[RMDB]
Source information
Chemical mapping of a 177-nucleotide RNA with DMS and 2A3.
RNA sequence: GGGAACGACUCGAGUAGAGUCGAAAAAACAAUCUUUGCUACGGGGUAACUUGGAGGUAUUUUGAGCGAGAAGUGCAGAGGAAAGCUUUAAACGUCACCCUCAUUGUAAUCGACGCUGAAUUCAGGGUAUGACCACACUUUUCGAAGUGUGGUCAUAAAAAGAAACAACAACAACAAC
Reactivity to DMS in 0.01 (KOAc 150mM, MgCl2 10mM, bicine 150mM(pH8.5), 24C), signal-to-noise 3, nucleotides 027 to 126: a100a040c120a080a050u010c060u000u010u000g030c050u010a100c100g010g000g000g000u010a010a020c080u000u000g000g020a040g000g020u040a050u040u000u000u030g000a120g000c010g010a070g000a060a090g010u020g000c040a080g020a130g000g000a090a060a080g000c070u010u010u000a050a070a080c100g000u020c060a080c080c010c000u000c050a090u000u010g000u010a020a050u010c100g000a050c040g020c040u020g000a070a070u020u000c030a050g030g000g040
Reactivity to 2A3 in 0.01 (KOAc 150mM, MgCl2 10mM, bicine 150mM(pH8.5), 24C), signal-to-noise 3, nucleotides 027 to 126: a000a000c150a090a110u130c060u080u050u160g010c000u020a070c000g010g030g020g000u070a040a040c030u010u040g060g080a000g000g090u040a160u020u210u040u060g060a040g000c060g010a010g030a210a010g040u050g000c100a070g030a030g100g030a070a020a020g050c020u010u130u150a130a220a010c000g110u040c000a010c000c000c000u000c020a050u030u140g020u070a020a100u050c100g000a060c010g000c090u090g030a100a110u190u010c010a060g000g000g010
For DMS, 4,908 sequencing reads were counted.